RNA sequence: GGGAACGACUCGAGUAGAGUCGAAAACGGUCGAAAUUCGUUUCGACCGAAUAUGCUAGCUCAGCACAGCUGCAAUGCUAAGCUGAAAGCCAGCUGCAAGCGCGAGUUCGGCGUUCGCGCCGAACAAUGCAGGGUAAUAGUUCGCUAUUACCCUGCAAAAAGAAACAACAACAACAAC
Reactivity to 2A3 in 0.01 (KOAc 150mM, MgCl2 10mM, bicine 150mM(pH8.5), 24C), signal-to-noise 2, nucleotides 027 to 126: c010g000g000u000c010g010a000a000a010u130u070c170g080u020u000u000c000g000a000c000c000g000a000a000u100a020u050g020c030u020a020g000c010u010c060a010g000c000a030c060a040g030c010u090g030c100a070a050u140g030c020u040a050a090g010c000u000g010a160a010a000g010c000c000a000g000c000u050g050c070a100a100g030c070g050c060g110a120g060u000u010c020g000g020c030g020u010u010c210g030c000g000c020c000g020a000a000c000a020a030
Reactivity to DMS in 0.01 (KOAc 150mM, MgCl2 10mM, bicine 150mM(pH8.5), 24C), signal-to-noise 3, nucleotides 027 to 126: c040g000g010u000c020g000a010a010a000u000u020c230g010u000u000u000c000g000a010c010c010g000a030a010u020a060u000g000c000u000a040g010c010u000c020a020g020c000a110c300a050g020c010u000g010c210a080a060u010g030c000u000a090a280g010c000u010g020a040a100a100g000c010c000a010g000c000u010g020c200a100a110g000c130g000c140g020a170g000u000u000c010g020g020c010g010u000u010c210g000c000g000c020c000g020a000a010c030a070a120